[RMDB]
Record summary:
This 177-nucleotide RNA was probed chemically with 2A3 and DMS. For 2A3, 9,842 sequencing reads were counted. Source: RMDB library OK2TRN, as collected in RNAgym. The reactions ran in a buffer of 150 mM KOAc, 10 mM MgCl2 and 150 mM bicine (pH 8.5), at 24 C.

RNA sequence: GGGAACGACUCGAGUAGAGUCGAAAAUCAUGCUAUCACCAGCUAACUGGGUCUCCAUCAGUUAGUGGUGAGCGAAAGUUCACCUAGUGUCAAUGAUGGAGACGUUGACGCUAUCGUGAUAGCAUGCCUAGACGUUUCUAUUCGUAGAAACGUCUAGAAAAGAAACAACAACAACAAC
Reactivity to 2A3 in 0.01 (KOAc 150mM, MgCl2 10mM, bicine 150mM(pH8.5), 24C), signal-to-noise 3, nucleotides 027 to 126: u100c000a000u000g000c000u000a000u000c000a000c010c020a000g010c010u010a120a140c020u030g110g000g050u010c010u020c010c000a020u000c010a010g080u030u190a040g050u030g060g000u000g010a000g000c010g040a080a020a000g000u010u000c000a000c000c000u020a030g090u000g130u210c060a080a070u010g000a020u020g010g010a020g000a010c000g040u010u010g020a020c040g000c010u010a020u150c050g000u010g000a000u000a000g010c000a000u000g000c000
Reactivity to DMS in 0.01 (KOAc 150mM, MgCl2 10mM, bicine 150mM(pH8.5), 24C), signal-to-noise 4, nucleotides 027 to 126: u020c010a010u000g000c010u010a010u000c000a010c000c230a030g000c010u000a080a150c090u010g010g010g010u010c020u000c020c010a050u000c010a030g000u000u010a080g020u000g020g020u000g000a000g020c000g000a100a100a150g010u000u000c000a000c000c000u010a090g010u010g000u010c120a100a070u000g010a050u000g000g010a030g010a020c010g000u010u000g010a180c240g000c010u000a060u000c240g000u000g000a010u000a000g000c000a000u000g010c290